[RMDB]
RNA sequence: GGGAACGACUCGAGUAGAGUCGAAAAGAUAGUCUCUAUUACUUUUAAAAUGCAAUAACCUAUAUAAAUUUUGAAGAUUCUAACUAUUAAGUGUGGAUUUUGUCACUUUUAACAAGCUCACAGCGGAGCUAGUAUACAUGUUCGCAUGUAUACUAGCAAAAGAAACAACAACAACAAC
Reactivity to 2A3 in 0.01 (KOAc 150mM, MgCl2 10mM, bicine 150mM(pH8.5), 24C), signal-to-noise 1, nucleotides 027 to 126: g000a000u090a010g100u000c000u000c020u110a100u070u070a210c050u150u140u070u230a080a100a170a130u070g020c000a010a040u040a120a150c010c020u040a010u000a050u070a300a180a210u230u200u030u100g040a030a040g010a060u050u070c030u130a050a060c010u060a130u300u070a190a040g050u050g010u020g120g050a070u000u180u080u000g140u060c060a060c080u040u060u000u000a070a030c030a010a040g010c020u020c040a040c000a040g060c040g010g010a000
Reactivity to DMS in 0.01 (KOAc 150mM, MgCl2 10mM, bicine 150mM(pH8.5), 24C), signal-to-noise 2, nucleotides 027 to 126: g000a060u000a060g000u010c030u000c040u000a070u030u030a140c030u000u010u010u010a020a080a150a050u020g020c060a100a090u010a070a120c080c030u040a180u020a160u000a040a040a120u040u000u000u010g000a120a040g000a070u010u000c010u010a140a050c040u000a090u010u010a050a080g030u000g000u010g010g020a060u000u000u000u000g020u000c050a060c130u000u030u020u000a010a050c110a050a080g000c050u000c020a040c110a070g000c090g000g010a180
Conditions: 150 mM KOAc, 10 mM MgCl2 and 150 mM bicine (pH 8.5), 24 C. Chemical mapping of a 177-nucleotide RNA with 2A3 and DMS. For DMS the reverse transcriptase was MarathonRT. Source: RMDB library OK2TRN, as collected in RNAgym. The 2A3 profile rests on 827 reads.